[RMDB]
RNA sequence: GGGAACGACUCGAGUAGAGUCGAAAAGGGCCGUUCACUGGAUCCGAAGCCUCUAGAAGGAUAAUAUAGGCACUCUAUACCCUACUCCGACUCAAUACGUCCCCGUCGUACAGAAUGGUAACAUAUCGAACACAACCUAACUUCGGUUAGGUUGUAAACAAUUCAAUCCGUUCGCGGAUUGAAUUGUAAAAGAAACAACAACAACAAC
Reactivity to DMS in 0.01 (KOAc 150mM, MgCl2 10mM, bicine 150mM(pH8.5), 24C), signal-to-noise 1, nucleotides 027 to 156: g010g020g030c010c000g020u000u000c010a130c120u030g000g010a180u010c040c100g000a270a260g010c010c030u010c040u010a100g000a180a120g010g030a120u010a040a120u000a050u000a080g010g030c080a040c130u000c030u000a200u000a010c050c030c040u000a050c050u010c030c040g010a040c040u010c150a140a180u010a150c030g040u000c000c000c000c010g030u000c040g080u030a150c060a090g030a050a030u000g000g000u010a080a090c090a090u000a070u000c020g010a090a270c120a060c010a000a040c000c000u000a000a010c040u040u010c300g060g030u030u000a000g010g010u000u000g000u000a030a010
Reactivity to 2A3 in 0.01 (KOAc 150mM, MgCl2 10mM, bicine 150mM(pH8.5), 24C), signal-to-noise 2, nucleotides 027 to 156: g010g010g010c050c010g130u060u080c060a090c120u090g010g010a020u120c030c030g000a030a020g030c040c000u020c020u050a140g030a230a020g140g010a010u050a180a080u080a110u080a110g030g000c060a020c100u050c010u020a030u040a060c000c000c000u010a030c010u030c040c030g010a040c000u010c070a010a160u040a160c020g080u060c010c020c000c000g080u090c010g000u070a020c010a060g090a100a050u040g050g000u050a120a000c030a020u150a120u200c090g050a190a000c030a000c000a120a000c000c000u020a000a000c010u010u000c090g020g000u000u000a000g020g000u000u000g000u000a000a000
Conditions: 150 mM KOAc, 10 mM MgCl2 and 150 mM bicine (pH 8.5), 24 C. This 207-nucleotide RNA was probed chemically with DMS and 2A3. It was measured as part of the RMDB library M2RFPK. For DMS the reverse transcriptase was MarathonRT. For 2A3 the reverse transcriptase was SuperScript II with manganese. For 2A3, 654 sequencing reads were counted.